[RMDB]
Source: RMDB library OK2TST, as collected in RNAgym. Structure probing data (2A3 and DMS) for a 177-nucleotide construct. For 2A3, 30,628 sequencing reads were counted. Conditions: 150 mM KOAc, 10 mM MgCl2 and 150 mM bicine (pH 8.5), 24 C.
RNA sequence: GGGAACGACUCGAGUAGAGUCGAAAACAGUGCUUGAUGCCCAUGCGUCUCUCCUUGUGCGGCGGCGUCAGCCGGCGCGAUAGUAAUCCGCUUCGCCGACGAUCGUGUUGACGAGCCGGCCGAUUCAACCUAAUAUCAGUUUCGACUGAUAUUAGGUAAAAGAAACAACAACAACAAC
Reactivity to 2A3 in 0.01 (KOAc 150mM, MgCl2 10mM, bicine 150mM(pH8.5), 24C), signal-to-noise 9, nucleotides 027 to 126: c020a040g050u040g110c030u080u100g040a040u110g050c010c030c020a050u090g020c010g050u010c010u000c010u030c050c020u100u100g060u080g090c020g050g020c010g020g010c010g050u050c030a010g010c000c000g050g000c030g000c010g030a030u070a090g100u090a070a140u040c040c050g010c020u050u040c030g020c030c020g040a070c040g040a130u150c050g020u070g030u220u090g040a020c010g000a010g050c010c010g060g020c010c020g040a030u110u080c040a030
Reactivity to DMS in 0.01 (KOAc 150mM, MgCl2 10mM, bicine 150mM(pH8.5), 24C), signal-to-noise 9, nucleotides 027 to 126: c090a100g020u000g010c050u000u000g010a090u010g010c030c040c040a130u000g010c050g000u010c030u000c040u000c040c040u000u000g020u000g020c010g010g010c030g020g010c020g010u000c140a070g020c010c030g010g000c040g020c050g010a030u000a070g010u000a090a160u010c090c070g000c050u000u000c060g010c020c030g000a060c070g010a090u010c110g010u000g010u000u000g000a050c030g010a140g010c040c020g010g010c060c030g000a110u000u010c110a100